[RMDB]
This 207-nucleotide RNA was probed chemically with 2A3 and DMS. The reactions ran in a buffer of 150 mM KOAc, 10 mM MgCl2 and 150 mM bicine (pH 8.5), at 24 C. For DMS, 14,222 sequencing reads were counted.
RNA sequence: GGGAACGACUCGAGUAGAGUCGAAAAUUGUGAGGUCACACACCUGGGGAUGAUGUUUGUGUAUGUGUGUGUUGGGUGUACAAACCUGGGGAUGAUAUUUCUCUGUGUGUGUGUUGUGGGGACACACGGAUGAUGUUUGUGAGUGUGUGUGUGUAUAGAUUUACUACCUAUUCGUAGGUAGUAAAUCAAAAGAAACAACAACAACAAC
Reactivity to 2A3 in 0.01 (KOAc 150mM, MgCl2 10mM, bicine 150mM(pH8.5), 24C), signal-to-noise 8, nucleotides 027 to 156: u130u080g030u030g040a050g020g040u090c020a010c000a000c000a010c060c030u050g010g010g010g010a040u060g020a040u060g090u040u140u070g070u030g020u030a090u080g070u010g010u000g010u010g040u070u040g020g020g000u030g010u040a060c050a030a080a020c010c030u020g000g020g000g000a030u050g060a020u040a100u130u110u030c050u000c020u010g040u010g000u000g000u000g010u000g030u100u070g010u040g010g010g010g010a000c010a000c000a000c030g010g010a030u080g010a020u050g070u040u120u070g050u030g030a060g020u030g000u010g000u010g000u010g000u010g010u020a050u070a120
Reactivity to DMS in 0.01 (KOAc 150mM, MgCl2 10mM, bicine 150mM(pH8.5), 24C), signal-to-noise 3, nucleotides 027 to 156: u000u010g010u010g020a090g020g020u020c040a050c030a060c050a040c040c040u000g010g010g010g010a110u000g010a060u000g020u000u000u020g020u000g030u000a040u010g040u000g010u000g040u010g030u010u000g010g010g020u000g020u020a120c070a060a050a080c010c030u000g010g010g000g000a120u000g010a130u010a110u000u000u010c050u000c020u010g030u010g030u000g000u000g010u000g000u020u000g000u000g010g020g010g010a080c030a030c030a040c040g010g010a080u000g020a080u000g010u000u000u020g020u000g000a100g030u000g020u000g030u000g030u000g030u000g010u000a120u000a170